[RMDB]
RNA sequence: GGGAACGACUCGAGUAGAGUCGAAAACUCACGAAAUCCCGCUUUUGGCAUAUAUACUUCCCCGCGAACAGCAAGAUAUGAGGGAUAAUCGCCGUGAAGUUUGAGUGGAACUGCACCAAUUGUCUCCACUUGCGCAGUCACAUCAUCACCACGAUUGCGAACAUGAGAAGUUCGCUUCUCAUGUUCGAAAAGAAACAACAACAACAAC
Reactivity to DMS in 0.01 (KOAc 150mM, MgCl2 10mM, bicine 150mM(pH8.5), 24C), signal-to-noise 1, nucleotides 027 to 156: c020u000c030a160c050g000a120a140a070u000c010c000c010g000c040u010u010u000u020g010g020c080a050u000a120u000a120u000a080c120u030u010c040c010c000c050g000c080g030a090a130c080a150g000c020a090a090g040a130u000a010u000g000a090g030g040g020a060u010a020a080u000c090g000c070c040g020u000g010a060a080g030u000u000u010g020a200g030u010g010g000a060a040c000u000g010c020a120c060c060a060a090u000u000g020u000c050u000c030c090a050c060u000u010g040c060g030c020a040g000u000c030a040c050a110u000c080a110u000c040a020c010c000a070c020g020a150u000u000g030
Reactivity to 2A3 in 0.01 (KOAc 150mM, MgCl2 10mM, bicine 150mM(pH8.5), 24C), signal-to-noise 4, nucleotides 027 to 156: c020u010c020a040c050g050a030a100a100u040c040c040c000g030c100u040u070u140u110g060g010c060a040u080a000u040a030u050a280c060u060u020c020c000c030c000g040c020g040a060a060c040a040g050c050a070a010g050a050u090a080u200g070a130g010g000g000a000u030a030a040u050c040g010c050c020g000u020g040a060a000g000u020u110u120g030a020g000u030g010g010a030a030c010u050g020c030a040c060c010a090a140u090u090g030u010c060u000c100c010a040c010u020u030g000c040g010c030a010g010u070c010a010c020a100u080c000a030u050c010a050c050c000a070c080g080a070u060u100g060
Chemical mapping of a 207-nucleotide RNA with DMS and 2A3. For DMS the reverse transcriptase was MarathonRT. The 2A3 profile rests on 1,850 reads. Conditions: 150 mM KOAc, 10 mM MgCl2 and 150 mM bicine (pH 8.5), 24 C. For 2A3 the reverse transcriptase was SuperScript II with manganese.